Chemical mapping of a 177-nucleotide RNA with DMS and 2A3. Reactivities are given for positions 27 through 126. 2A3 adducts were read by reverse transcription with SuperScript II with manganese. It was measured as part of the RMDB library OK1LIB. The RNA was probed in 150 mM KOAc, 10 mM MgCl2 and 150 mM bicine (pH 8.5) at 24 C.
RNA sequence: GGGAACGACUCGAGUAGAGUCGAAAAUUACACUCAUGUCGACGCGGAUCAUAGAUAAUAACAAUGAUUAUGGGACAGGUUAAGAUCCGGCAUCAGUAGGAUCCGGCUAGAAGGAAGCGCCCGCGAACGAGUUUCACACUUUCGAGUGUGGAAUUCGAAAAGAAACAACAACAACAAC
Reactivity to DMS in 0.01 (KOAc 150mM, MgCl2 10mM, bicine 150mM(pH8.5), 24C), signal-to-noise 9, nucleotides 027 to 126: u020u030a090c110a080c030u010c060a060u020g000u000c020g010a080c080g020c040g000g000a030u010c020a050u000a080g010a100u020a080a080u030a090a110c120a090a060u020g010a060u010u010a070u020g000g000g010a070c090a050g000g000u010u010a070a080g000a050u000c000c010g000g020c120a050u010c050a110g020u020a080g010g000a040u000c020c010g010g000c040u000a080g010a110a080g000g010a100a120g000c100g010c030c000c010g020c100g010a080a170
Reactivity to 2A3 in 0.01 (KOAc 150mM, MgCl2 10mM, bicine 150mM(pH8.5), 24C), signal-to-noise 7, nucleotides 027 to 126: u070u030a040c040a020c030u060c020a050u060g020u010c030g020a080c020g000c020g020g010a020u010c010a020u040a070g120a040u100a160a040u090a120a050c080a050a120u110g030a030u030u090a040u140g020g000g050a040c020a020g070g000u030u050a050a010g010a040u020c000c000g000g010c020a050u030c010a020g160u160a030g050g010a010u000c000c000g010g000c010u050a050g040a150a070g150g030a070a040g040c050g050c040c020c010g060c050g020a040a040